This 177-nucleotide RNA was probed chemically with 2A3 and DMS. The 2A3 profile rests on 21,958 reads. For DMS the reverse transcriptase was MarathonRT.

[RMDB]
RNA sequence: GGGAACGACUCGAGUAGAGUCGAAAAGAUAUGGAUUCUUCCCUACUUUGUAGCGGAGUGUCGGAAACGACAUGACGCUGGUAGGGAGAGAAUCCUAAGUCAAAGUUCACAACUUCGGUUGUGAACAGAAAACGUAUAGGUUCGCCUAUACGUUUUCAAAAGAAACAACAACAACAAC
Reactivity to 2A3 in 0.01 (KOAc 150mM, MgCl2 10mM, bicine 150mM(pH8.5), 24C), signal-to-noise 7, nucleotides 027 to 126: g030a030u090a070u190g000g000a000u000u000c010u010u010c010c030c000u000a020c030u150u300u300g300u300a000g010c010g010g000a070g020u000g000u000c010g030g030a080a080a080c020g000a010c000a000u020g030a010c000g000c010u000g000g000u000a010g000g010g000a050g060a020g000a020a000u000c000c000u010a130a010g020u020c060a160a060a110g000u010u000c010a000c000a010a020c000u080u140c300g160g000u010u010g000u020g000a000a000c000a000
Reactivity to DMS in 0.01 (KOAc 150mM, MgCl2 10mM, bicine 150mM(pH8.5), 24C), signal-to-noise 8, nucleotides 027 to 126: g010a040u000a300u000g000g010a000u000u000c000u000u000c000c000c000u000a000c010u000u020u020g030u010a010g030c010g000g010a300g010u000g010u000c000g000g000a110a100a270c000g010a000c000a010u000g010a300c000g020c000u000g000g020u010a000g000g000g010a020g010a020g010a020a000u000c000c000u000a010a080g010u000c040a110a110a200g010u000u000c000a000c000a000a010c000u000u020c240g030g010u000u000g010u000g000a010a000c000a100